[RMDB]
RNA sequence: GGGAACGACUCGAGUAGAGUCGAAAAUUAGUAGUUCUAUUAGUGACAUUUAUAAUAGGCUUGACGAAUUGAGUGCUGAUGCACAAGUUGACAGGCUGAUCACAGGAAGACUUACAGCACUUAAUGCAUUUGUGUCUCAGACUCUAACCAGACAAGCACUACGCUACGGUUUCGACCGUAGCGUAGUAAAAGAAACAACAACAACAAC
Reactivity to 2A3 in 0.01 (KOAc 150mM, MgCl2 10mM, bicine 150mM(pH8.5), 24C), signal-to-noise 1, nucleotides 027 to 156: u160u120a000g050u000a000g010u040u190c140u150a050u060u060a100g000u000g060a130c030a060u140u170u190a170u030a250a000u000a000g010g010c000u030u010g020a010c000g060a040a090u050u040g060a060g000u280g300c000u000g000a000u040g050c000a000c000a000a030g080u010u030g080a110c010a050g000g000c000u000g030a110u140c080a000c000a140g070g120a130a000g030a040c000u030u000a130c000a000g000c000a030c190u120u030a290a000u140g010c010a040u000u000u000g000u000g000u080c000u000c000a000g000a000c000u000c010u030a060a000c010c010a040g050a050c000a000a000g040c010
An RNA of 207 nucleotides, treated with 2A3 and read out base by base. Values cover nucleotides 27 to 156. It was measured as part of the RMDB library OK3TST. For 2A3 the reverse transcriptase was SuperScript II with manganese. The reactions ran in a buffer of 150 mM KOAc, 10 mM MgCl2 and 150 mM bicine (pH 8.5), at 24 C. The 2A3 profile rests on 349 reads.